[RMDB]
RNA sequence: GGGAACGACUCGAGUAGAGUCGAAAAGAAAGAAAGAAAGCGGUUGGGUGGGUCCAUCGACCGUCGUGGCGUAUUCGGACGCUUUACCUCGACGCGAGGAAAUAGCGAGACCGACCACCCCCUUUAACAGAGGUAUAGUAGUUCGCUACUAUACCAACACAGUGGACUUCUUCGGAAGUCCACUGUGAAAAGAAACAACAACAACAAC
Reactivity to 2A3 in 0.01 (KOAc 150mM, MgCl2 10mM, bicine 150mM(pH8.5), 24C), signal-to-noise 1, nucleotides 027 to 156: g110a110a030a000g070a030a100a080g060a010a240a000g100c100g040g110u100u170g100g000g000u140g010g080g040u160c190c000a070u080c010g040a040c040c000g080u160c090g000u100g000g000c000g000u010a220u000u100c000g010g000a060c000g030c010u080u090u080a070c000c000u000c020g160a180c130g100c100g090a000g000g030a020a090a020u020a070g000c030g000a020g070a060c000c000g000a000c000c000a000c000c000c000c000c030u070u090u000a030a040c070a030g070a030g080g010u000a040u000a000g010u000a000g000u000u090c170g170c160u000a020c000u000a000u000a000c000c000a000a000

The record gives the reactivity of an RNA of 207 nucleotides to 2A3.
The 2A3 profile rests on 416 reads.
It was measured as part of the RMDB library M2RFPK.
For 2A3 the reverse transcriptase was SuperScript II with manganese.